Structure probing data (DMS and 2A3) for a 177-nucleotide construct. Values cover nucleotides 27 to 126. It was measured as part of the RMDB library OK2TRN. The RNA was probed in 150 mM KOAc, 10 mM MgCl2 and 150 mM bicine (pH 8.5) at 24 C.
[RMDB]
RNA sequence: GGGAACGACUCGAGUAGAGUCGAAAAUUCGUGGUCUGCUGUCAAUCACAGGAUACUAAUUGCACACUGGGCGGUACACCGCUCACAGUAUUGACUUAAGUCGGUGGUAAGUCUGUGUGGAGAUCGAAUAUCGAGUAUAUUUCGAUAUACUCGAUAUAAAAGAAACAACAACAACAAC
Reactivity to DMS in 0.01 (KOAc 150mM, MgCl2 10mM, bicine 150mM(pH8.5), 24C), signal-to-noise 9, nucleotides 027 to 126: u000u010c060g030u000g010g010u000c030u000g010c050u000g000u000c100a100a090u010c080a060c050a060g010g010a080u000a050c070u010a070a100u010u000g010c060a050c070a050c090u010g020g000g010c010g010g010u010a180c220a080c010c010g010c010u000c030a020c150a040g010u000a100u010u010g010a060c030u000u000a060a080g010u010c060g020g010u000g010g000u000a070a150g010u000c010u000g010u000g010u000g000g010a090g000a060u000c070g010a120
Reactivity to 2A3 in 0.01 (KOAc 150mM, MgCl2 10mM, bicine 150mM(pH8.5), 24C), signal-to-noise 9, nucleotides 027 to 126: u060u030c030g020u060g020g020u000c020u060g060c040u040g120u150c060a070a090u110c010a030c010a060g040g020a030u030a080c020u060a060a140u140u120g030c040a010c000a010c060u050g010g020g000c010g010g030u100a050c100a050c040c000g010c000u010c010a030c000a000g010u010a150u110u210g090a030c000u060u070a110a030g060u090c030g030g020u030g020g060u260a050a040g020u010c020u020g010u010g040u030g040g020a050g000a050u100c050g030a050